[RMDB]
RNA sequence: GGGAACGACUCGAGUAGAGUCGAAAAUAUUACUAGUAUAGGACCACAUAUUAGAAACAAUAAAUUUUCUGACAAACUUAAAACAAUAAAACAAAACAGAGGAUAGGUCUCACUCCUGAGCUAAAAAUACGUUAAUGUAAUUCGUUACAUUAACGUAAAAAGAAACAACAACAACAAC
Reactivity to 2A3 in 0.01 (KOAc 150mM, MgCl2 10mM, bicine 150mM(pH8.5), 24C), signal-to-noise 1, nucleotides 027 to 126: u130a010u130u060a050c060u010a010g070u060a100u020a090g100g010a070c020c000a000c010a070u030a030u060u000a010g040a070a120a030c130a010a190u240a160a160a070u170u070u060u080c010u040g020a000c030a030a100a000c080u080u210a020a110a110a090c050a020a060u100a120a140a020a000c050a030a070a020a000c000a030g020a000g050g000a010u070a120g000g000u000c060u010c060a020c000u010c020c010u080g110a060g000c030u170a190a110a010a000a000
Reactivity to DMS in 0.01 (KOAc 150mM, MgCl2 10mM, bicine 150mM(pH8.5), 24C), signal-to-noise 2, nucleotides 027 to 126: u010a040u000u000a050c010u010a020g010u010a070u010a150g000g000a100c040c110a090c050a030u000a020u010u000a000g020a120a090a110c080a040a090u010a090a050a100u000u010u000u000c070u000g040a130c060a020a050a070c050u000u030a050a110a050a070c140a030a100u020a030a040a100a150c050a100a020a080a090c090a060g000a070g010g010a070u000a070g020g010u000c020u000c040a080c060u000c060c000u000g000a060g040c110u010a040a050a070a080a120